[RMDB]
RNA sequence: GGGAACGACUCGAGUAGAGUCGAAAAUAACCCCAACGGAUGCACUAGCUCACUGCCUCUGGUCGGCUGCUGGUUAAGACUUCACCGGAGAAUCCCGCCAUCUGGGAUAAUGGAUGGUCCCCGCCUUCAGGGUUAAGAUAGGCUAAACCUGUGAAUGCAUGACGCUACGGUUCGCCGUAGCGUCAUGAAAAGAAACAACAACAACAAC
Reactivity to 2A3 in 0.01 (KOAc 150mM, MgCl2 10mM, bicine 150mM(pH8.5), 24C), signal-to-noise 1, nucleotides 027 to 156: u070a050a040c030c000c000c000a080a000c100g050g050a030u130g000c070a050c000u060a080g020c030u020c030a020c010u010g010c010c000u070c050u060g120g000u160c040g000g070c080u150g000c020u030g080g000u010u040a140a010g050a050c020u000u100c150a020c010c030g060g000a000g030a030a070u010c000c000c000g000c010c000a030u040c110u080g010g040g030a100u260a090a070u200g070g000a000u000g010g000u000c020c000c000c000g010c000c010u040u090c110a080g000g000g000u010u070a020a000g000a110u190a080g050g000c000u000a000a060a020c040c040u040g000u020g180a110a060u140g010